[RMDB]
RNA sequence: GGGAACGACUCGAGUAGAGUCGAAAAGCAAGCCUUUUACAUUUUGUGCAACAAGAUAUUCCAGGAUUAUCUUCAGUUUUCCUUGUCACAGUUCGGCAAUCCACCUUUUCUCCAAAGGACCCUGGCUUCUUUUUGUGGAAAACAAUAUUUAUUAAUACGUAGGGUGAGAAUUCGUUCUCACCCUACGAAAAGAAACAACAACAACAAC
Reactivity to 2A3 in 0.01 (KOAc 150mM, MgCl2 10mM, bicine 150mM(pH8.5), 24C), signal-to-noise 1, nucleotides 027 to 156: g080c170a010a010g000c000c060u210u090u140u130a000c060a240u150u110u120u120g070u030g050c030a090a080c010a080a000g010a010u030a020u090u180c020c010a000g020g020a020u020u060a040u070c010u000u050c030a050g070u040u000u000u100c040c000u000u060g030u080c000a010c000a050g030u060u020c030g040g020c040a020a130u020c010c010a120c030c000u060u020u000u080c110u000c000c000a100a100a000g000g000a030c090c000c000u000g000g060c000u020u020c000u050u260u030u040u080g010u050g050g050a010a110a020a020c010a020a020u090a030u140u170u150a070u270u300a090a300u300a010